[RMDB]
RNA sequence: GGGAACGACUCGAGUAGAGUCGAAAAUAUCUGAGUAGAGGUGAAGGAGAGGGCCAGGUCCACCUGGGUGGCCCGAGGCAGUGUGGAGGGCCAGGAGAGGAGAGCACCCUCCACCCUUGUCUGAGCAGCCCUCCAGGGUACGGAGACAGGAGUUCAGGUAUCGACUGACAUUCGUGUCAGUCGAUACAAAAGAAACAACAACAACAAC
Reactivity to 2A3 in 0.01 (KOAc 150mM, MgCl2 10mM, bicine 150mM(pH8.5), 24C), signal-to-noise 1, nucleotides 027 to 156: u230a030u030c060u070g020a010g030u090a040g070a040g010g040u110g070a080a070g050g010a030g010a010g040g040g000c010c010a020g070g050u010c010c010a000c040c000u070g020g070g000u010g020g000c010c030c020g030a030g000g000c020a000g000u030g010u040g020g000a010g000g000g000c020c030a030g020g080a130g010a050g060g060a060g000a010g020c030a030c010c000c000u030c010c010a000c000c000c000u110u120g000u010c020u000g030a030g090c080a000g000c030c000c000u000c000c010a020g000g000g010u050a020c060g000g030a030g020a000c030a030g040g000a050g040u060u090c010a000g030